Structure probing data (2A3 and DMS) for a 177-nucleotide construct. The reactions ran in a buffer of 150 mM KOAc, 10 mM MgCl2 and 150 mM bicine (pH 8.5), at 24 C.
RNA sequence: GGGAACGACUCGAGUAGAGUCGAAAAAUUUACCUGACCCCAAUAAGUUUGGUUUUCCUGACACCUCAUUUUAUAAUCCAGAUACACAGCGGCUGGUUUGGGCCUGUGUAGGUGUUGAGGUAGGUCGCUAUGCCUAGACGUUCGCGUCUAGGCAUAGAAAAGAAACAACAACAACAAC
Reactivity to 2A3 in 0.01 (KOAc 150mM, MgCl2 10mM, bicine 150mM(pH8.5), 24C), signal-to-noise 3, nucleotides 027 to 126: a000u070u080u200a040c010c000u000g040a020c000c000c020c000a020a030u170a160a060g130u020u030u040g020g010u070u000u040u060c000c020u020g010a020c010a010c060c010u000c020a050u030u100u160u230a130u110a110a070u140c030c020a010g030a210u090a010c000a010c010a030g050c080g240g000c040u070g060g290u070u110u200g110g000g010c010c000u000g020u000g000u000a050g030g000u010g040u020u030g010a020g000g020u010a040g110g040u000c020g000
Reactivity to DMS in 0.01 (KOAc 150mM, MgCl2 10mM, bicine 150mM(pH8.5), 24C), signal-to-noise 2, nucleotides 027 to 126: a070u000u010u030a080c000c020u000g000a140c010c000c070c080a110a060u050a070a100g020u000u000u010g000g000u040u010u000u010c040c010u010g020a050c020a060c000c000u000c000a060u020u020u010u010a100u050a060a170u030c070c040a130g020a300u000a030c020a010c010a030g020c160g020g000c000u000g000g010u010u060u050g000g000g000c080c000u000g030u000g020u000a020g030g010u020g000u000u010g010a030g000g010u000a060g030g030u000c040g000
Values cover nucleotides 27 to 126.